Structure probing data (2A3 and DMS) for a 177-nucleotide construct. Values are in units of 0.01, from 0 to 300, in steps of 10. The DMS profile rests on 1,206 reads.
RNA sequence: GGGAACGACUCGAGUAGAGUCGAAAACAAAUUGAAUUACUAAACCUGCUAGUCCCAUUGCAAAACCUCGAUGUUCUUUACUGAACAAUGUAAAUAACGUAAAUUGCAUUAAGGGCAUAAGUACGCCCAUGCUUGGGUAGUUCGCUACCCAAGCAUGAAAAGAAACAACAACAACAAC
Reactivity to 2A3 in 0.01 (KOAc 150mM, MgCl2 10mM, bicine 150mM(pH8.5), 24C), signal-to-noise 2, nucleotides 027 to 126: c020a040a060a000u120u140g020a050a070u150u060a090c080u170a110a030a080c020c050u050g040c010u050a020g120u060c030c010c040a010u040u060g000c000a000a050a100a080c010c050u060c110g070a050u060g030u050u000c010u020u030u060a180c210u110g110a160a090c050a160a050u140g050u090a070a080a050u060a090a000c020g010u020a000a020a200u010u010g020c010a010u100u000a060a090g040g000g000c040a100u110a090a070g040u030a030c070g000c050c000
Reactivity to DMS in 0.01 (KOAc 150mM, MgCl2 10mM, bicine 150mM(pH8.5), 24C), signal-to-noise 2, nucleotides 027 to 126: c070a050a060a090u020u000g010a100a060u000u020a110c100u000a080a100a160c060c030u000g000c090u010a080g030u000c000c000c010a090u000u000g000c020a010a000a160a100c070c060u000c040g000a030u000g000u000u000c020u000u000u010a100c050u000g070a040a120c230a120a050u000g010u000a030a010a100u000a060a060c090g020u000a010a020a060u000u000g010c000a000u000u000a030a060g000g010g010c070a050u000a070a120g010u010a100c170g000c050c020